[RMDB]
Source: RMDB library M2RFPK, as collected in RNAgym.
Chemical mapping of a 207-nucleotide RNA with 2A3.
The reactions ran in a buffer of 150 mM KOAc, 10 mM MgCl2 and 150 mM bicine (pH 8.5), at 24 C.
Reactivities are given for positions 27 through 156.
Values are in units of 0.01, from 0 to 300, in steps of 10.
2A3 is a SHAPE reagent: it acylates the 2'-hydroxyl of flexible nucleotides of all four kinds.
The 2A3 profile rests on 422 reads.

RNA sequence: GGGAACGACUCGAGUAGAGUCGAAAACUUAUCCGGUUUUAACGCUGUUUUAUUGGCGCAAAGGUUUACGGAUAAACAACUAAUAAUUAAACCUUUUGUGUGCGAAACGUGGUUGUUUAACCUACUCACUGCCCCCAGGGAUUCGUCCCUGGGGGAACUAUGGCUAUUCGUUCGCGAAUAGCCAUAGAAAAGAAACAACAACAACAAC
Reactivity to 2A3 in 0.01 (KOAc 150mM, MgCl2 10mM, bicine 150mM(pH8.5), 24C), signal-to-noise 1, nucleotides 027 to 156: c040u020u010a000u070c020c060g000g110u020u000u020u060a030a060c050g030c010u010g170u160u040u160u210a120u220u270g110g000c030g020c020a040a000a000g010g010u000u000u000a000c010g000g010a030u050a090a150a000c030a030a000c030u170a030a150u150a160a030u270u130a000a020a020c000c000u000u030u210u090g030u000g030u030g150c150g050a060a090a000c060g040u060g010g020u050u020g050u100u030u010a030a030c030c060u060a060c000u050c030a020c050u000g040c050c000c000c000c000a000g000g000g000a000u010u050c140g030u030c050c000c000u020g000g000g000g000g000a000a000